[RMDB]
RNA sequence: GGGAACGACUCGAGUAGAGUCGAAAACGUCCCCGUCGUACAGAAUGGUACCAUAUCUCUCCAAAUAUCUGAGCUUGGGUAUACGGGGAAACCCAACCCCUUGGGAAGAUUGGGUAUAUGGCUAAAUUACAUCGAUUGUACUUCGGUACAAUCGAAACAAGAAGCUAUCGUUCGCGAUAGCUUCUUGAAAAGAAACAACAACAACAAC
Reactivity to 2A3 in 0.01 (KOAc 150mM, MgCl2 10mM, bicine 150mM(pH8.5), 24C), signal-to-noise 2, nucleotides 027 to 156: c060g070u060c020c020c030c010g170u110c040g040u080a100c050a110g190a150a130u180g060g060u080a040c010c020a010u030a010u040c110u000c040u050c100c000a120a120a070u170a090u010c010u030g010a010g110c000u010u010g010g020g000u020a010u010a010c000g000g020g000g000a020a030a020c000c000c000a000a020c000c000c000c000u010u020g020g000g010a010a010g010a020u020u050g010g020g020u030a010u000a000u000g030g000c050u150a130a120a080u190u140a080c060a100u020c010g000a000u000u000g010u000a000c000u010u030c170g060g000u000a010c000a000a000u010c000g010a000a010a000
Reactivity to DMS in 0.01 (KOAc 150mM, MgCl2 10mM, bicine 150mM(pH8.5), 24C), signal-to-noise 1, nucleotides 027 to 156: c020g010u000c000c000c020c060g010u000c060g050u010a300c050a130g000a080a160u030g030g020u000a010c020c000a030u010a030u000c080u000c020u000c030c040a040a110a200u000a140u000c010u000g010a300g020c010u000u000g010g010g070u000a140u000a140c210g000g040g040g000a070a110a060c020c000c000a040a080c070c000c000c040u010u000g060g010g000a300a060g000a080u000u000g010g000g050u000a060u000a040u000g060g000c010u000a140a120a100u000u000a050c100a140u000c010g020a020u000u000g020u000a010c000u010u000c150g030g000u030a000c010a010a030u010c000g000a010a100a100